[RMDB]
RNA sequence: GGGAACGACUCGAGUAGAGUCGAAAAGAUAUGGACUCCACACGAGCAACAGCAGUGAUCGGAAACGAUCACUGACAUGCUCCUGUGUGAGUCCUAAGUCAAAGGUCAAUUCUUCGGAAUUGACCAACUCAUCAAUAACCUUCGGGUUAUUGAUGAGAAAAGAAACAACAACAACAAC
Reactivity to 2A3 in 0.01 (KOAc 150mM, MgCl2 10mM, bicine 150mM(pH8.5), 24C), signal-to-noise 4, nucleotides 027 to 126: g030a010u090a050u170g000g010a000c000u000c000c010a010c010a000c020g000a000g000c010a020a190c070a200g110c000a000g000u000g000a010u010c010g030g030a100a070a040c010g020a010u000c020a010c000u010g030a020c000a010u040g000c000u010c000c010u020g010u010g030u130g010a010g010u010c000c000u010a040a000g000u010c050a080a090a170g010g000u000c010a010a020u010u030c010u060u150c300g170g000a000a000u000u000g000a000c000c000a000a010
Reactivity to DMS in 0.01 (KOAc 150mM, MgCl2 10mM, bicine 150mM(pH8.5), 24C), signal-to-noise 5, nucleotides 027 to 126: g010a040u000a300u000g000g000a010c000u000c000c000a000c000a010c300g000a000g020c000a040a090c300a180g000c000a000g010u000g010a010u020c010g010g000a130a110a220c000g010a010u000c000a000c000u010g000a020c110a210u000g010c000u000c000c090u000g020u000g000u000g010a010g010u000c000c000u010a020a090g000u000c040a050a110a130g010g010u000c000a010a000u000u000c000u000u010c240g020g000a010a010u000u000g000a000c010c010a020a040
Chemical mapping of a 177-nucleotide RNA with 2A3 and DMS.
The RNA was probed in 150 mM KOAc, 10 mM MgCl2 and 150 mM bicine (pH 8.5) at 24 C.
Reactivities are rounded to 0.1 and cut off at 0 and 3.